The data come from the RNA Mapping Database (RMDB), library OK2TST. The record gives the reactivity of an RNA of 177 nucleotides to 2A3 and DMS. 2A3 adducts were read by reverse transcription with SuperScript II with manganese. For DMS the reverse transcriptase was MarathonRT. The 2A3 profile rests on 2,150 reads. The RNA was probed in 150 mM KOAc, 10 mM MgCl2 and 150 mM bicine (pH 8.5) at 24 C.
[RMDB]
RNA sequence: GGGAACGACUCGAGUAGAGUCGAAAACGCGCCAAGCUGGCCAGACUGCGUGAAACCGGCGUUGCGUUCCCCAACAAUUUCGUGCCCGAUGCGCACGCCGCCGACCUGCACGCCAGGUACGACGGCAGACGUAGCCGAUGUUCGCAUCGGCUACGUCAAAAGAAACAACAACAACAAC
Reactivity to 2A3 in 0.01 (KOAc 150mM, MgCl2 10mM, bicine 150mM(pH8.5), 24C), signal-to-noise 2, nucleotides 027 to 126: c040g000c010g030c030c010a050a010g060c030u120g020g000c020c040a060g030a130c050u150g060c030g050u070g090a120a000a010c020c000g020g010c050g050u090u140g020c000g030u000u030c020c000c000c010a050a050c030a040a090u110u130u100c020g010u020g020c000c040c040g140a080u120g010c030g000c040a010c050g010c000c020g000c000c010g000a010c000c000u010g010c090a090c290g060c120c000a020g030g000u040a080c010g000a000c020g000g040c000a010
Reactivity to DMS in 0.01 (KOAc 150mM, MgCl2 10mM, bicine 150mM(pH8.5), 24C), signal-to-noise 2, nucleotides 027 to 126: c070g050c040g000c120c080a100a060g010c060u020g000g020c030c080a180g000a080c060u000g020c050g040u010g010a050a210a170c110c020g000g020c040g000u010u000g010c000g010u000u000c040c000c000c150a100a060c110a040a090u020u000u000c060g040u000g000c070c000c060g010a070u030g040c100g030c030a060c130g000c020c030g000c000c010g000a090c000c010u000g000c000a080c200g000c100c000a000g010g020u000a070c030g020a010c010g020g030c060a070